[RMDB]
Background: An RNA of 177 nucleotides, treated with 2A3 and DMS and read out base by base. 2A3 adducts were read by reverse transcription with SuperScript II with manganese. Conditions: 150 mM KOAc, 10 mM MgCl2 and 150 mM bicine (pH 8.5), 24 C. Reactivities are rounded to 0.1 and cut off at 0 and 3. For DMS, 6,076 sequencing reads were counted. Source: RMDB library OK2TST, as collected in RNAgym. Values cover nucleotides 27 to 126.

RNA sequence: GGGAACGACUCGAGUAGAGUCGAAAAUAUCGAACACGGUUUAGAGUUGUCAAUGGGGCCGUGCAAGCGUGGAGUGAUGCACAGGGUUAUGCACCGGUUCUAUUGCUUAGGUCUCUACAGCUCCGAGUACUCUUACAUCGUUCGCGAUGUAAGAGUAAAAAGAAACAACAACAACAAC
Reactivity to 2A3 in 0.01 (KOAc 150mM, MgCl2 10mM, bicine 150mM(pH8.5), 24C), signal-to-noise 3, nucleotides 027 to 126: u080a010u020c030g020a040a030c050a020c140g060g030u070u130u140a030g000a000g010u070u110g080u170c050a050a040u060g010g010g030g000c030c000g000u030g010c020a010a020g010c070g100u040g030g120a170g050u130g040a070u100g050c030a010c000a040g270g040g050u170u150a090u150g000c010a000c030c020g000g000u040u000c000u010a010u000u050g010c010u030u060a090g060g000u020c000u000c000u020a030c020a040g000c030u030c000c020g000a020g080
Reactivity to DMS in 0.01 (KOAc 150mM, MgCl2 10mM, bicine 150mM(pH8.5), 24C), signal-to-noise 5, nucleotides 027 to 126: u020a070u000c050g010a100a100c130a120c100g010g010u000u010u000a070g020a050g020u000u000g000u000c130a040a060u000g010g010g010g010c000c000g020u000g000c070a020a080g010c040g010u010g000g010a070g020u010g010a100u010g000c290a030c060a130g010g030g020u010u000a130u000g000c000a010c070c060g060g010u010u000c010u000a020u000u000g000c060u000u010a100g010g000u000c010u000c020u000a050c100a050g010c040u000c030c050g000a110g020